RNA sequence: GGGAACGACUCGAGUAGAGUCGAAAACCUGUAGACGAAAUCCAGAGUGGGAAUUAGUGGUAUCCUGAGUAAUACAUCACACGUGGAACGAUGUAUGAACCCGCGCGGACCACCGCGCAAGGCUAAAUUCAUCAAUACCCUUCGGGGUAUUGAUGAAAAAAGAAACAACAACAACAAC
Reactivity to DMS in 0.01 (KOAc 150mM, MgCl2 10mM, bicine 150mM(pH8.5), 24C), signal-to-noise 4, nucleotides 027 to 126: c010c000u020g030u050a050g000a120c070g000a050a130a090u000c010c020a090g000a060g030u000g000g000g000a100a070u010u020a070g010u010g000g020u020a050u000c020c020u010g000a090g000u010a090a000u000a000c020a020u000c010a110c190a110c130g020u040g000g000a080a120c170g000a000u000g010u000a000u000g000a070a130c080c070c120g000c020g000c000g010g000a200c200c300a060c000c010g000c010g000c000a040a020g020g020c060u030a060a080a190
Reactivity to 2A3 in 0.01 (KOAc 150mM, MgCl2 10mM, bicine 150mM(pH8.5), 24C), signal-to-noise 4, nucleotides 027 to 126: c000c000u040g050u050a040g030a040c030g040a080a070a040u030c030c010a030g030a070g160u120g000g050g040a060a130u150u060a100g060u010g030g000u090a120u090c020c030u050g020a020g040u040a030a020u000a010c010a010u000c010a000c010a020c180g120u160g080g040a110a100c070g010a030u000g010u000a010u000g010a030a010c040c010c050g000c000g000c010g050g040a070c000c030a170c040c000g050c000g000c010a030a040g030g000c060u090a080a060a100

Chemical mapping of a 177-nucleotide RNA with DMS and 2A3. DMS adducts were read by reverse transcription with MarathonRT. Conditions: 150 mM KOAc, 10 mM MgCl2 and 150 mM bicine (pH 8.5), 24 C. Source: RMDB libraries RFM100 and RFMREP, as collected in RNAgym.